[RMDB]
RNA sequence: GGGAACGACUCGAGUAGAGUCGAAAACGCUGGGCGACAUGAGUUGACAUGACGGUACUGAAGCGCGCACGGUACACGUCAACAGCAACUCCGCUGUCGCCUGUGCUGAAGCGCGCACGGCAACCGAAAGGUGCGGGAAAGGAGAUUCGUCUCCUAAGGAAGUGUCCUUAUUCGUAAGGACACUUCCAAAAGAAACAACAACAACAAC
Reactivity to 2A3 in 0.01 (KOAc 150mM, MgCl2 10mM, bicine 150mM(pH8.5), 24C), signal-to-noise 1, nucleotides 027 to 156: c000g000c000u010g000g000g000c000g000a000c000a010u250g000a020g000u040u000g100a090c070a210u030g000a010c000g030g050u000a000c000u030g060a240a010g000c000g020c000g060c130a020c040g000g060u070a050c300a100c090g010u000c060a120a050c040a010g070c000a020a000c000u010c000c000g000c030u000g000u000c000g010c000c000u000g010u000g000c010u080g010a220a070g000c000g000c000g020c000a000c060g230g000c070a140a020c010c010g010a120a060a000g150g000u060g030c030g000g050g000a270a290a010g050g020a000g020a020u090u130c180g040u070c120u000c000c000u000a060a050
Background
Chemical mapping of a 207-nucleotide RNA with 2A3. The 2A3 profile rests on 658 reads. Values cover nucleotides 27 to 156.